[RMDB]
RNA sequence: GGGAACGACUCGAGUAGAGUCGAAAAACGAACAGUAAAACAUGAAAGCAGGGAGGUUUUCAUUCUGGCAGUUGGCAACUUUCACGGCAGAUGGAGAAUUUCAAAAGCAAUUGCUCAAUUAUCAAACUCAAUCACCUUAAUUCGUUAAGGUGAUUGAAAAAGAAACAACAACAACAAC
Reactivity to DMS in 0.01 (KOAc 150mM, MgCl2 10mM, bicine 150mM(pH8.5), 24C), signal-to-noise 6, nucleotides 027 to 126: a110c080g000a080a080c090a070g020u010a050a050a110a110c090a060u010g010a080a060a100g010c040a050g010g010g010a080g010g010u010u000u010u000c040a070u000u010c070u010g010g010c060a050g000u000u000g010g010c060a050a050c080u000u000u000c070a050c120g020g020c060a040g000a100u000g000g000a040g010a090a060u000u010u010c080a040a060a070a090g010c080a060a060u000u010g010c020u000c060a050a070u000u010a060u000c100a050a070a120c200
Reactivity to 2A3 in 0.01 (KOAc 150mM, MgCl2 10mM, bicine 150mM(pH8.5), 24C), signal-to-noise 5, nucleotides 027 to 126: a000c040g020a050a010c020a020g030u120a020a090a040a060c030a040u060g040a080a050a000g020c030a020g110g010g010a040g040g020u030u020u030u060c020a020u080u040c040u050g050g020c010a030g010u050u040g050g000c010a030a060c030u080u170u090c070a020c020g020g000c020a020g010a060u050g040g010a070g040a070a080u070u120u110c050a100a060a000a010g010c020a040a100u080u070g000c020u020c050a020a100u130u060a090u150c050a040a030a070c020